Overview
An RNA of 207 nucleotides, treated with 2A3 and DMS and read out base by base. DMS adducts were read by reverse transcription with MarathonRT. For DMS, 2,476 sequencing reads were counted. The 2A3 profile rests on 2,306 reads.

RNA sequence: GGGAACGACUCGAGUAGAGUCGAAAAGAUAGAAAGGCUAAGCACCUCGCAAUGACGUAAGGUGGGACUUUUCCCUACAGUUCGAGCGGUCGAACUAGAGGGGAGUGUAACCUUGGUACCGCCGUAGAAACAGGGUUACGACGUCUUACCGAGAUUCACUAAGUCUAGCGUUCGCGCUAGACUUAGUAAAAGAAACAACAACAACAAC
Reactivity to 2A3 in 0.01 (KOAc 150mM, MgCl2 10mM, bicine 150mM(pH8.5), 24C), signal-to-noise 3, nucleotides 027 to 156: g060a010u140a020g000a010a010a000g000g000c000u020a030a000g000c000a020c010c000u060c050g020c090a100a180u160g050a040c030g090u100a110a110g050g000u050g000g000g020a030c030u120u060u070u050c010c000c000u060a080c040a000g010u010u000c010g000a010g020c050g050g060u090c000g000a000a000c000u030a050g020a060g120g000g010g000a050g050u120g000u010a000a000c000c000u000u010g000g010u060a040c000c030g050c010c040g100u090a020g140a000a190a010c000a000g000g000g000u000u000a010c030g020a010c030g010u010c000u000u020a000c010c000g020a000g000a100u200u180c100
Reactivity to DMS in 0.01 (KOAc 150mM, MgCl2 10mM, bicine 150mM(pH8.5), 24C), signal-to-noise 1, nucleotides 027 to 156: g010a150u010a070g030a030a010a030g000g000c000u000a060a220g000c030a070c000c050u010c040g060c060a100a140u010g020a080c070g010u000a100a080g020g020u020g000g000g000a050c040u000u010u000u000c010c000c010u010a070c030a050g020u000u010c000g020a070g010c210g040g000u000c000g010a040a010c000u000a040g000a120g010g010g010g020a050g010u020g000u000a060a000c000c030u000u010g010g000u000a060c010c010g000c030c130g000u000a180g000a050a070a190c020a100g000g010g020u000u000a070c000g050a160c160g010u000c010u000u010a120c050c000g000a050g040a180u000u010c090
The RNA was probed in 150 mM KOAc, 10 mM MgCl2 and 150 mM bicine (pH 8.5) at 24 C.